[RMDB]
RNA sequence: GGGAACGACUCGAGUAGAGUCGAAAAGAUACAUGCGCAAGAGUUGGCCAAUGAAUUAUCUCAGCCGCUUUACGUGGUUUUUUGUUUGACCGCCGGUUUUCUCAACGCAACAAAACGUCAAUUUGCAUUUUUGUUGGACGGUCUGAAAGAGGUACAAUAACAUUACGCUUUUCGAAGCGUAAUGUUAAAAAGAAACAACAACAACAAC
Reactivity to DMS in 0.01 (KOAc 150mM, MgCl2 10mM, bicine 150mM(pH8.5), 24C), signal-to-noise 2, nucleotides 027 to 156: g010a110u000a120c090a110u010g030c030g030c040a060a080g010a120g050u010u020g050g000c000c050a090a110u020g000a140a110u010u010a100u000c030u000c040a170g020c020c020g000c040u010u010u000a040c070g000u010g020g010u000u000u000u000u000u000g010u020u000u010g000a050c030c020g020c020c030g050g040u010u000u010u000c030u000c020a050a090c040g010c050a040a090c060a020a020a030a060c070g000u000c040a090a200u010u010u000g140c040a090u000u000u020u000u010g010u000u010g010g030a040c020g010g010u000c050u010g000a060a070a080g020a070g010g020u000a040c060a060a190
Reactivity to 2A3 in 0.01 (KOAc 150mM, MgCl2 10mM, bicine 150mM(pH8.5), 24C), signal-to-noise 2, nucleotides 027 to 156: g050a030u160a080c070a110u110g020c030g020c070a080a070g010a010g020u200u250g080g000c030c040a030a110u100g060a020a120u210u100a100u170c050u040c080a010g040c040c000g000c040u200u190u080a050c020g020u000g010g010u060u040u020u030u160u040g060u040u030u120g000a000c020c020g040c040c060g130g000u060u040u100u000c010u020c000a030a040c020g000c040a010a010c000a020a080a030a020c030g070u090c070a080a200u020u060u290g020c020a090u040u050u020u010u090g030u010u000g060g030a020c040g030g000u000c030u010g060a060a050a010g100a050g010g030u030a040c030a030a080
An RNA of 207 nucleotides, treated with DMS and 2A3 and read out base by base. DMS adducts were read by reverse transcription with MarathonRT. For DMS, 4,091 sequencing reads were counted.